[RMDB]
Description:
Structure probing data (DMS and 2A3) for a 177-nucleotide construct. For 2A3, 4,478 sequencing reads were counted. For DMS, 1,384 sequencing reads were counted.
RNA sequence: GGGAACGACUCGAGUAGAGUCGAAAAGAACAUCAGUUCGCUGAUGUUCAAAGGCCGAGUAGUGUUGGGACGCGAAAGGCCAUACAUAAACAUUCACUCAGAAAACAACGUCCUUCGGGACGUUGAACGCAAAAUAUCUGUUCGCAGAUAUUUUGCGAAAAGAAACAACAACAACAAC
Reactivity to DMS in 0.01 (KOAc 150mM, MgCl2 10mM, bicine 150mM(pH8.5), 24C), signal-to-noise 2, nucleotides 027 to 126: g000a000a030c000a000u010c000a000g010u000u000c290g000c000u000g000a020u000g000u030u000c000a050a100a090g010g050c000c000g010a080g020u000a100g000u000g020u000u030g040g000g010a190c020g000c010g030a080a120a130g000g010c000c000a030u000a020c170a090u010a070a060a050c150a040u040u020c130a070c090u000c080a110g000a080a070a090a150c000a000a000c000g000u000c000c000u000u030c150g080g040g010a010c010g000u000u000g010a020a080
Reactivity to 2A3 in 0.01 (KOAc 150mM, MgCl2 10mM, bicine 150mM(pH8.5), 24C), signal-to-noise 3, nucleotides 027 to 126: g010a000a000c010a000u000c000a000g010u060u060c150g030c130u010g000a000u000g000u000u000c010a030a010a020g010g000c010c000g000a000g010u000a000g000u010g100u110u170g250g070g070a050c020g000c000g020a000a010a010g000g000c010c000a010u020a000c000a040u110a000a120a000c010a060u150u210c040a050c100u120c050a020g170a060a140a030a030c020a010a000c000g000u000c010c010u050u040c220g070g000g000a000c000g000u000u000g000a010a000